[RMDB]
RNA sequence: GGGAACGACUCGAGUAGAGUCGAAAAGAGGGGCGGGGUGUGCUCGCCUGUAGUCCCUGCCGUACGACCCGAAGCCGGGCGAUCUAGGCGGGGGCAGGGUGAAGCGGUGCGAAAGCGCCGUGGAGGCCAUCCAUCCCUACUUCGGUAGGGAUGGAUGAAAAGAAACAACAACAACAAC
Reactivity to 2A3 in 0.01 (KOAc 150mM, MgCl2 10mM, bicine 150mM(pH8.5), 24C), signal-to-noise 6, nucleotides 027 to 126: g080a020g030g040g030g050c110g020g020g010g010u130g030u080g090c020u010c020g010c000c000u030g050u030a040g010u010c000c000c000u000g000c000c000g060u140a080c020g180a300c010c000c010g030a130a020g180c220c010g000g000g000c000g030a060u040c050u140a110g000g000c020g000g000g000g010g000c000a000g010g010g000u050g010a040a010g010c000g020g000u020g000c030g030a110a040a010g010c000g000c000c000g000u010g000g020a030g000g060c000
Reactivity to DMS in 0.01 (KOAc 150mM, MgCl2 10mM, bicine 150mM(pH8.5), 24C), signal-to-noise 3, nucleotides 027 to 126: g000a160g000g010g020g010c100g000g000g010g030u030g000u000g010c070u000c010g000c000c000u030g020u030a030g010u000c000c000c000u000g020c010c000g000u000a150c040g000a130c010c000c020g010a230a170g040c200c020g010g000g000c010g030a080u040c120u010a160g000g020c020g030g010g030g000g040c010a020g010g000g010u000g010a210a220g000c000g000g000u000g020c000g030a110a110a140g000c000g010c000c010g040u000g000g000a130g000g000c080